The data come from the RNA Mapping Database (RMDB), library M2PK90. Chemical mapping of a 177-nucleotide RNA with DMS and 2A3. For 2A3 the reverse transcriptase was SuperScript II with manganese. For DMS, 2,047 sequencing reads were counted. For 2A3, 3,051 sequencing reads were counted.

RNA sequence: GGGAACGACUCGAGUAGAGUCGAAAAUUAAAUAAUCGGCACCUAUAAGGUGGUGCCGAACCAGCGUGACCUAGGAACACGCAACGAGCAGUCUCCUAUGACUGCAAAGGUAUGGUAAAUAAAAAAACAUCAUAUAAUUCUUCGGAAUUAUAUGAUGAAAAGAAACAACAACAACAAC
Reactivity to DMS in 0.01 (KOAc 150mM, MgCl2 10mM, bicine 150mM(pH8.5), 24C), signal-to-noise 2, nucleotides 027 to 126: u030u010a050a040a070u000a080a150u010c000g040g000c000a000c000c000u000a190u000a120a080g020g020u000g000g010u000g010c000c000g000a020a040c010c030a080g020c010g020u010g000a060c070c110u020a130g020g020a090a140c010a000c000g010c010a080a100c100g000a300g000c020a000g020u000c010u000c220c170u030a060u000g010a010c000u000g000c000a010a050a020g000g000u010a080u000g000g010u000a050a030a120u080a020a010a010a060a070a040a120
Reactivity to 2A3 in 0.01 (KOAc 150mM, MgCl2 10mM, bicine 150mM(pH8.5), 24C), signal-to-noise 3, nucleotides 027 to 126: u060u020a050a000a070u200a030a090u050c000g000g000c000a020c000c060u130a100u060a300a130g140g040u080g000g000u000g000c000c000g000a000a000c020c000a010g000c020g000u010g010a070c020c030u080a130g120g060a140a000c010a000c000g000c000a000a020c020g020a010g010c000a000g000u010c000u070c070c030u180a110u300g020a010c000u010g020c000a020a020a020g090g000u110a050u100g000g020u050a060a110a120u100a040a160a080a010a010a000a020
Reactivities are given for positions 27 through 126. DMS adducts were read by reverse transcription with MarathonRT.